[RMDB]
RNA sequence: GGGAACGACUCGAGUAGAGUCGAAAAGCCUUCUAUGCUCGCGUCUUUCGAGGGGUACGUCGCCACUGGCCGCUGAAAAGUGGUGUGGCACUGCUCCGGCGAGGACGUGGGCGGACCGGCGGGAUGGCCGAUAUAAUGGGUUCGCCCAUUAUAUCGGAAAAGAAACAACAACAACAAC
Reactivity to DMS in 0.01 (KOAc 150mM, MgCl2 10mM, bicine 150mM(pH8.5), 24C), signal-to-noise 3, nucleotides 027 to 126: g010c000c010u000u020c120u010a300u010g000c010u000c010g000c030g000u000c000u000u000u000c000g030a300g000g000g000g000u000a020c210g030u000c170g010c000c000a030c000u010g010g040c000c010g000c000u000g010a100a060a140a020g050u000g000g030u000g030u000g000g000c010a010c010u000g000c010u010c000c010g000g020c090g000a030g000g000a000c010g030u000g000g000g030c000g000g000a070c300c200g000g000c030g020g000g010a090u000g010g010
Reactivity to 2A3 in 0.01 (KOAc 150mM, MgCl2 10mM, bicine 150mM(pH8.5), 24C), signal-to-noise 2, nucleotides 027 to 126: g010c000c000u030u030c090u040a030u090g000c000u000c000g030c000g020u000c010u050u300u070c020g030a030g010g020g000g000u010a030c190g030u030c160g000c000c000a010c030u050g210g010c000c000g000c010u030g030a060a060a020a010g000u020g000g000u050g000u010g050g000c010a000c000u000g000c000u020c000c000g010g030c000g000a000g030g000a000c000g030u010g000g000g000c000g000g000a010c030c010g000g030c100g000g020g060a090u150g160g040
Record summary:
This 177-nucleotide RNA was probed chemically with DMS and 2A3. Conditions: 150 mM KOAc, 10 mM MgCl2 and 150 mM bicine (pH 8.5), 24 C. It was measured as part of the RMDB library RFMREP. 2A3 adducts were read by reverse transcription with SuperScript II with manganese. The DMS profile rests on 3,547 reads. DMS adducts were read by reverse transcription with MarathonRT.